[RMDB]
RNA sequence: GGGAACGACUCGAGUAGAGUCGAAAAAUCUACUGGGGCUCAGGGAGGCAGCUAGCUGUGCCCAGUCUGAAGGUGAGUUAGUAACGGGGCCAGACCUCAAUGCUGGGCCCUCAGCAUGCAGCCCCGACAGUUUUAAAUCAUUCGUGAUUUAAAACUGAAAAGAAACAACAACAACAAC
Reactivity to 2A3 in 0.01 (KOAc 150mM, MgCl2 10mM, bicine 150mM(pH8.5), 24C), signal-to-noise 3, nucleotides 027 to 126: a020u050c020u050a020c020u030g020g020g000g000c010u010c030a010g010g050g030a010g070g000c020a020g010c020u060a010g010c020u030g070u130g150c030c010c010a040g110u020c070u120g120a120a020g020g040u040g030a060g020u030u040a010g020u040a220a040c030g010g000g050g000c000c010a050g050a300c000c010u050c010a090a160u200g010c000u010g000g040g000c000c000c010u000c010a000g000c000a010u120g000c000a000g030c000c000c010c000g010a010
Reactivity to DMS in 0.01 (KOAc 150mM, MgCl2 10mM, bicine 150mM(pH8.5), 24C), signal-to-noise 5, nucleotides 027 to 126: a090u010c030u000a070c050u000g010g010g010g010c020u000c020a040g000g000g010a050g000g010c110a160g020c060u000a050g010c030u010g020u000g000c010c000c020a090g010u010c190u010g000a150a110g000g010u000g010a060g010u000u000a030g010u010a080a130c080g000g000g010g010c020c030a200g000a120c020c030u000c050a100a070u000g020c010u000g000g000g010c010c030c010u000c020a000g000c040a040u000g010c130a060g000c010c000c000c020g010a260